The record gives the reactivity of an RNA of 207 nucleotides to 2A3 and DMS. Values cover nucleotides 27 to 156. For DMS the reverse transcriptase was MarathonRT. Source: RMDB library M2RFPK, as collected in RNAgym.
[RMDB]
RNA sequence: GGGAACGACUCGAGUAGAGUCGAAAAGAGUCAUACAACCCCAGAAACCAUUCCUUAUACCUUGAGUAUUGCUGAAUUCAGUUUAGCGUGCAUGCUCUUCGCUAUUCUCAUAGUGAUUGUCAAAUUUAAAACGACGAUGACUUCGGUCAUCGUCGAACAAAUAAACUGGGUUCGCCCAGUUUAUUUGAAAAGAAACAACAACAACAAC
Reactivity to 2A3 in 0.01 (KOAc 150mM, MgCl2 10mM, bicine 150mM(pH8.5), 24C), signal-to-noise 4, nucleotides 027 to 156: g010a010g030u110c030a000u110a200c050a100a170c030c010c000c020a030g140a080a060a040c040c010a090u060u080c020c000u140u150a080u050a200c010c010u080u130g040a040g060u050a060u080u150g020c040u030g040a140a110u150u150c050a080g070u020u080u080a020g010c030g020u040g000c010a030u030g010c010u000c000u050u000c000g000c000u010a020u080u050c060u040c040a060u050a060g020u010g060a150u070u080g040u070c040a030a060a140u060u220u200a060a120a050a030c030g000a000c000g000a000u000g010a000c010u030u070c200g060g000u000c000a000u020c000g000u000c000g010a010a000
Reactivity to DMS in 0.01 (KOAc 150mM, MgCl2 10mM, bicine 150mM(pH8.5), 24C), signal-to-noise 2, nucleotides 027 to 156: g010a070g030u010c040a130u000a070c020a090a160c010c020c040c050a170g010a140a070a070c040c050a090u000u000c000c050u000u000a120u000a030c050c030u000u000g020a100g010u000a060u000u000g000c030u000g010a060a100u000u000c100a150g000u000u000u000a050g010c030g060u010g000c030a110u000g010c000u000c010u000u000c030g020c030u010a070u000u000c030u000c040a100u010a060g000u000g010a090u010u000g000u000c030a080a090a110u010u000u000a040a080a090a210c020g020a040c000g000a020u000g010a020c000u010u020c300g060g030u000c000a000u000c000g020u000c000g000a010a050